RNA sequence: GGGAACGACUCGAGUAGAGUCGAAAAGGAUAUAGAAGAGACUCUCUCACUACUGUUUCCUAGUUAUGGAGAUUACUUAUCCUUGAAAGAAACAAUUGACCAAGUAACUUUCCAAUCUGCCAUACACAAAGUCAACGAGAGAAGAAGAGUUAGGGCAAGUGAUUCUUAUAUUCGUAUAAGAAUCACUAAAAGAAACAACAACAACAAC
Reactivity to DMS in 0.01 (KOAc 150mM, MgCl2 10mM, bicine 150mM(pH8.5), 24C), signal-to-noise 3, nucleotides 027 to 156: g000g010a070u000a110u000a090g000a200a120g010a300g010a060c040u010c030u000c030u000c040a140c080u000a060c040u000g040u000u000u010c010c020u010a110g010u000u000a150u000g010g000a050g010a030u000u000a070c040u000u000a050u000c010c040u000u000g020a110a060a130g020a150a130a120c070a120a190u010u000g030a100c030c060a040a130g000u000a020a050c040u000u000u010c020c020a060a100u000c060u000g020c030c040a110u000a040c100a080c070a050a110a100g000u000c010a030a100c050g010a110g000a130g010a060a120g000a050a100g010a080g000u000u000a060g010g010g070c060a110
Reactivity to 2A3 in 0.01 (KOAc 150mM, MgCl2 10mM, bicine 150mM(pH8.5), 24C), signal-to-noise 5, nucleotides 027 to 156: g050g000a050u080a030u140a180g150a210a040g060a030g040a060c000u000c000u000c000u010c050a030c090u180a040c030u040g030u050u050u040c000c010u010a020g010u060u060a050u060g010g000a020g010a040u040u060a060c050u050u060a040u080c030c000u020u050g060a080a080a040g070a050a140a010c050a070a120u090u150g070a090c050c030a060a000g020u030a070a070c030u050u040u030c020c010a030a030u020c020u060g110c030c020a040u060a070c060a020c040a090a160a010g040u110c030a050a060c080g030a010g010a010g020a140a030g030a030a010g040a010g030u070u110a030g020g020g000c050a050
Background: An RNA of 207 nucleotides, treated with DMS and 2A3 and read out base by base. Source: RMDB library OK3TST, as collected in RNAgym. For 2A3, 3,508 sequencing reads were counted. The RNA was probed in 150 mM KOAc, 10 mM MgCl2 and 150 mM bicine (pH 8.5) at 24 C. The DMS profile rests on 4,589 reads. For 2A3 the reverse transcriptase was SuperScript II with manganese. DMS adducts were read by reverse transcription with MarathonRT.